[RMDB]
RNA sequence: GGGAACGACUCGAGUAGAGUCGAAAAUUGCGUGUUGUUGGUCAUGCCAUGCAAGGCACUCUUUUGAAGUUGACUGUCGAUGUUGCUAACCCUAGCACUCCAGCCUACACUUUUACAACAGUGAAACCGUAGUGUAAUACUUCGGUAUUACACUACGAAAAGAAACAACAACAACAAC
Reactivity to DMS in 0.01 (KOAc 150mM, MgCl2 10mM, bicine 150mM(pH8.5), 24C), signal-to-noise 3, nucleotides 027 to 126: u010u000g010c080g050u020g010u000u000g000u010u010g020g020u000c100a110u010g010c010c030a120u000g010c160a170a080g010g030c030a040c070u000c020u020u000u000u010g000a090a060g000u000u000g010a050c030u000g000u010c110g020a050u010g050u000u000g050c020u000a100a140c150c160c160u000a060g030c020a030c020u000c020c020a040g000c020c020u010a060c100a050c020u000u000u000u000a070c130a080a080c170a050g030u000g000a110a070a100c250
Reactivity to 2A3 in 0.01 (KOAc 150mM, MgCl2 10mM, bicine 150mM(pH8.5), 24C), signal-to-noise 2, nucleotides 027 to 126: u060u080g030c080g030u010g020u030u010g030u030u040g020g010u090c030a060u100g010c020c000a040u150g010c050a100a040g000g030c000a000c020u070c010u010u090u080u140g090a060a030g030u060u050g010a070c000u040g010u090c030g040a050u100g040u180u000g000c020u040a100a120c040c020c020u010a000g000c010a000c000u020c020c010a020g020c010c010u090a020c010a000c000u030u060u090u220a080c060a060a010c000a020g000u020g080a110a040a030c080

Chemical mapping of a 177-nucleotide RNA with DMS and 2A3. For DMS the reverse transcriptase was MarathonRT. 2A3 adducts were read by reverse transcription with SuperScript II with manganese. The reactions ran in a buffer of 150 mM KOAc, 10 mM MgCl2 and 150 mM bicine (pH 8.5), at 24 C. Values are in units of 0.01, from 0 to 300, in steps of 10.